[RMDB]
RNA sequence: GGGAACGACUCGAGUAGAGUCGAAAAAAGCCUGGGUCAACUUACUCUCGUCAUCCUGCGUAGUCUGCCCGGUGGUAAGAAAGUCAUGCGCGUCGUCAGCCGUAAGCAGGCGUGAUAUACAAAUGGAAAUCGGUCUAGUAUUCGUACUAGACCGAUUAAAAGAAACAACAACAACAAC
Reactivity to DMS in 0.01 (KOAc 150mM, MgCl2 10mM, bicine 150mM(pH8.5), 24C), signal-to-noise 5, nucleotides 027 to 126: a100a070g010c000c020u000g020g000g020u010c040a050a050c070u010u000a050c030u000c000u010c040g020u010c050a060u010c050c010u000g000c090g010u020a110g000u010c040u020g020c000c010c010g000g020u010g000g010u020a060a100g020a080a060a060g010u020c080a050u020g010c030g000c070g000u000c070g000u010c070a110g000c040c040g000u020a050a090g010c080a120g010g010c040g000u020g010a070u010a100u010a060c150a050a110a090u020g000g010a120
Reactivity to 2A3 in 0.01 (KOAc 150mM, MgCl2 10mM, bicine 150mM(pH8.5), 24C), signal-to-noise 3, nucleotides 027 to 126: a000a010g040c010c000u030g040g000g000u060c030a030a020c070u060u040a040c020u050c020u030c050g020u000c000a060u020c000c010u000g020c020g000u020a020g060u050c030u030g090c020c000c010g040g020u060g000g000u050a090a040g050a160a080a030g030u060c030a040u120g030c040g000c000g070u050c020g020u020c070a030g000c010c000g010u060a020a060g040c040a000g030g010c000g010u040g030a010u090a000u010a150c080a050a110a060u160g080g010a000

This 177-nucleotide RNA was probed chemically with DMS and 2A3. For 2A3, 4,333 sequencing reads were counted. 2A3 adducts were read by reverse transcription with SuperScript II with manganese. Reactivities are rounded to 0.1 and cut off at 0 and 3. Conditions: 150 mM KOAc, 10 mM MgCl2 and 150 mM bicine (pH 8.5), 24 C.